This 177-nucleotide RNA was probed chemically with 2A3.
The 2A3 profile rests on 765 reads.
RNA sequence: GGGAACGACUCGAGUAGAGUCGAAAACAGGCAACACUGAGCAGUGAGUGGAUCCCUGAUCUUUUUCCACCUGCCUGACUUUUCUAGCACACCAUCGUAAAGUGGAAAAGUAUCCGCGACUGAUACAGCGGUAUCGGUACUUCGGUACCGAUACCGCAAAAGAAACAACAACAACAAC
Reactivity to 2A3 in 0.01 (KOAc 150mM, MgCl2 10mM, bicine 150mM(pH8.5), 24C), signal-to-noise 2, nucleotides 027 to 126: c000a010g040g000c000a100a000c030a090c080u270g080a040g110c000a000g110u100g170a090g000u050g010g020a040u010c010c020c000u040g120a190u060c020u030u040u020u030u000c000c000a040c040c010u060g030c000c000u010g140a150c000u060u040u050u030c030u060a030g060c000a030c020a000c050c050a060u020c000g090u050a000a030a140g060u050g000g020a090a000a000a000g060u000a010u000c000c010g090c030g100a050c020u040g000a060u040a180c070a000
2A3 adducts were read by reverse transcription with SuperScript II with manganese. It was measured as part of the RMDB library OK1LIB. Values cover nucleotides 27 to 126. 2A3 is a SHAPE reagent: it acylates the 2'-hydroxyl of flexible nucleotides of all four kinds. The reactions ran in a buffer of 150 mM KOAc, 10 mM MgCl2 and 150 mM bicine (pH 8.5), at 24 C.